[RMDB]
RNA sequence: GGGAACGACUCGAGUAGAGUCGAAAAACACAUCAGAUGGGACUUUUUCACCACCGAUGAUAAUAAGUAAUGGCUGAUGAUGAAGACAUGUUUCGCGAAUCACCUCCGUAACAUCCUGUACGCGCUCUCCAUACAUCGUGAGAUGGAUAACUGUCCCCUUAACGAGCUGAUUCGUCAGCUCGUUAAGAAAAGAAACAACAACAACAAC
Reactivity to 2A3 in 0.01 (KOAc 150mM, MgCl2 10mM, bicine 150mM(pH8.5), 24C), signal-to-noise 5, nucleotides 027 to 156: a000c090a020c010a050u090c040a020g070a120u110g020g010g040a030c030u100u070u030u070u080c080a060c040c010a040c020c080g020a040u040g020a010u050a170a040u110a180a000g150u060a080a080u100g060g020c050u020g030a060u040g010a040u060g050a090a010g060a030c030a060u060g040u040u080u080c050g010c080g060a010a030u100c050a060c060c020u000c010c020g040u020a030a010c010a060u050c010c020u060g050u100a030c030g010c000g000c040u010c000u000c050c010a040u030a120c010a030u040c010g010u040g090a100g010a100u020g020g020a040u040a090a030c030u070g030u040c010c000c010
Reactivity to DMS in 0.01 (KOAc 150mM, MgCl2 10mM, bicine 150mM(pH8.5), 24C), signal-to-noise 2, nucleotides 027 to 156: a070c020a120c040a090u010c040a090g030a100u000g010g010g000a160c090u000u000u000u000u000c000a090c000c020a070c070c010g000a120u010g010a080u000a060a120u000a090a130g020u020a040a070u010g010g030c040u000g000a080u000g010a090u010g000a070a080g010a100c080a110u000g000u000u000u000c050g030c050g010a100a150u020c080a030c050c010u000c010c050g020u010a070a070c050a060u000c030c020u000g010u000a050c070g020c060g040c050u000c010u000c030c010a080u000a080c050a030u000c010g020u010g040a120g020a070u000g010g030a100u000a050a060c090u010g030u000c000c020c000
This 207-nucleotide RNA was probed chemically with 2A3 and DMS. For 2A3, 3,442 sequencing reads were counted. The reactions ran in a buffer of 150 mM KOAc, 10 mM MgCl2 and 150 mM bicine (pH 8.5), at 24 C. Values cover nucleotides 27 to 156.